[RMDB]
RNA sequence: GGGAACGACUCGAGUAGAGUCGAAAAUGAUGUUCUACGGCCAGGGCGCGGGCGGCGCGCCGACCGCCUCUGCGGUGACCGGUGACCUAGUGAUGGCCGCCCGCAACCGGGUACUCGGCAGCCGCGGCGAUCGUACGGAAUUCGUUCCGUACGAUCGAAAAGAAACAACAACAACAAC
Reactivity to 2A3 in 0.01 (KOAc 150mM, MgCl2 10mM, bicine 150mM(pH8.5), 24C), signal-to-noise 1, nucleotides 027 to 126: u130g000a030u040g010u130u110c040u070a090c090g010g000c010c010a060g000g020g000c010g020c000g000g000g030c000g000g020c030g000c000g020c010c000g010a020c000c000g020c010c130u170c130u300g000c030g020g010u040g050a050c020c140g000g010u010g020a090c040c130u170a100g150u040g250a170u220g110g000c000c000g000c000c000c000g050c000a000a000c000c000g000g000g000u020a160c030u040c100g040g020c020a000g000c020c050g060c050g030g040
Reactivity to DMS in 0.01 (KOAc 150mM, MgCl2 10mM, bicine 150mM(pH8.5), 24C), signal-to-noise 2, nucleotides 027 to 126: u010g010a120u010g030u000u010c020u010a090c100g000g000c000c030a100g040g020g000c280g020c020g020g020g000c000g000g020c020g030c070g030c010c010g010a020c040c010g030c020c140u010c270u010g010c150g000g020u000g010a070c080c000g010g010u000g000a200c140c120u000a130g020u010g000a120u020g020g020c010c010g010c010c010c000g000c010a030a080c030c010g010g030g000u000a020c080u000c050g010g000c060a130g000c010c020g010c060g000g010